[RMDB]
RNA sequence: GGGAACGACUCGAGUAGAGUCGAAAAGGGGUCGAGCGAAGAACGUGGAAGAACCGUAUGGUGGAGCUCGCCUCGUACCACUGAAGCCUCCACGGUGGUACGAGGCGAGUGCUGAAGCCAUACUCAGUAUUCCACGGGAGCUCGACGGAGGCACCCACGUAUCUAAGAAGUUCGCUUCUUAGAUACGAAAAGAAACAACAACAACAAC
Reactivity to DMS in 0.01 (KOAc 150mM, MgCl2 10mM, bicine 150mM(pH8.5), 24C), signal-to-noise 2, nucleotides 027 to 156: g030g020g030g050u000c010g020a050g040c000g030a080a180g040a130a160c030g030u020g010g000a020a020g010a150a140c300c300g000u000a000u000g000g020u000g020g020a100g010c000u000c000g000c000c000u000c000g010u010a000c010c000a000c010u000g010a070a070g030c030c000u000c020c030a200c080g010g000u020g050g040u010a020c010g010a020g010g000c000g000a000g030u000g030c100u020g000a120a300g000c000c010a020u000a000c030u000c000a030g020u000a180u000u010c030c000a000c020g030g020g000a080g050c020u000c000g000a010c000g000g000a120g010g040c050a250c000c000c010a220
Reactivity to 2A3 in 0.01 (KOAc 150mM, MgCl2 10mM, bicine 150mM(pH8.5), 24C), signal-to-noise 2, nucleotides 027 to 156: g100g010g050g010u010c000g000a000g010c010g120a300a030g010a030a010c000g000u000g010g000a010a000g010a010a000c010c010g000u000a000u000g000g000u020g020g080a030g000c000u010c010g010c000c010u010c000g000u000a000c000c000a000c010u030g020a140a020g020c000c000u000c010c000a030c030g000g000u000g000g000u010a000c000g000a000g000g050c000g000a000g010u000g000c040u080g040a020a000g000c000c000a000u000a000c000u000c000a000g010u000a000u000u020c000c000a000c000g000g000g000a000g000c000u000c000g010a000c000g000g000a000g010g000c010a060c000c010c010a020
Conditions: 150 mM KOAc, 10 mM MgCl2 and 150 mM bicine (pH 8.5), 24 C. Structure probing data (DMS and 2A3) for a 207-nucleotide construct. DMS adducts were read by reverse transcription with MarathonRT. The 2A3 profile rests on 8,965 reads.